RNA sequence: GGGAACGACUCGAGUAGAGUCGAAAAAGCCAUACCAUUACGAUGAUAUGGCAAGUCCGUGACGGCGAUGGAUCCCGCCUGGCCGAUGCCGAACUGCCGAUCUGGCUGAUGGUUCCUGCCCCGUCAAAAAACGUAAAGCACUUCGGUGCUUUACGAAGACUGAUCCCUUGUUCGCAAGGGAUCAGUCAAAAGAAACAACAACAACAAC
Reactivity to 2A3 in 0.01 (KOAc 150mM, MgCl2 10mM, bicine 150mM(pH8.5), 24C), signal-to-noise 2, nucleotides 027 to 156: a030g030c000c000a010u050a010c000c000a020u080u030a060c250g130a020u020g000a010u000a000u000g000g000c010a000a000g070u000c030c010g040u040g010a010c000g000g010c090g060a020u060g000g000a030u060c010c010c000g010c020c030u020g010g030c020c010g060a060u120g120c030c040g090a160a060c120u130g020c040c040g030a050u040c000u050g010g030c040u060g040a110u140g030g000u010u000c000c000u050g020c030c000c000c020g020u050c040a000a030a030a130a000a000c010g000u000a010a000a000g000c000a000c010u030u070c180g070g010u000g000c000u010u000u000a000c000g010a020a000
An RNA of 207 nucleotides, treated with 2A3 and read out base by base. The RNA was probed in 150 mM KOAc, 10 mM MgCl2 and 150 mM bicine (pH 8.5) at 24 C. The data come from the RNA Mapping Database (RMDB), library M2RFPK.